[RMDB]
RNA sequence: GGGAACGACUCGAGUAGAGUCGAAAAGUAGUGCUUCGCCUAGCGAAAAGGUAGUUGCAGACUUAAAUGCACGCUUGGCACGAGCAAAAAUGAACAUAGAUAGAUCACCUGAAAGUAAAGACAUAACUGAAAUAGUUUUUUUCGAAAAACUAUUUCAAAAAGAAACAACAACAACAAC
Reactivity to DMS in 0.01 (KOAc 150mM, MgCl2 10mM, bicine 150mM(pH8.5), 24C), signal-to-noise 5, nucleotides 027 to 126: g020u010a080g010u000g020c020u000u000c140g020c020c030u000a060g020c030g000a090a100a110a110g010g020u000a080g020u000u010g020c020a050g010a100c120u000u000a070a080a090u000g000c030a080c040g010c030u000u000g010g010c020a080c180g000a060g010c020a020a070a040a090a070u000g000a080a070c060a050u000a070g000a120u000a090g000a080u000c080a060c010c000u000g010a050a050a090g010u020a080a050a100g010a070c080a050u010a090a110c180
Reactivity to 2A3 in 0.01 (KOAc 150mM, MgCl2 10mM, bicine 150mM(pH8.5), 24C), signal-to-noise 2, nucleotides 027 to 126: g050u080a010g110u000g020c000u000u020c010g000c020c000u020a030g000c030g090a060a050a020a030g130g020u110a070g040u160u040g000c020a020g040a100c050u100u230a020a120a100u080g000c030a000c040g000c020u020u010g020g000c020a010c130g010a010g000c000a020a110a040a010a000u120g020a070a010c040a110u070a080g040a010u070a070g070a030u080c040a040c080c000u050g040a060a000a060g060u090a070a130a030g080a000c020a080u080a160a040c060
Chemical mapping of a 177-nucleotide RNA with DMS and 2A3.
2A3 adducts were read by reverse transcription with SuperScript II with manganese.
Reactivities are given for positions 27 through 126.
The reactions ran in a buffer of 150 mM KOAc, 10 mM MgCl2 and 150 mM bicine (pH 8.5), at 24 C.
It was measured as part of the RMDB library OK2TRN.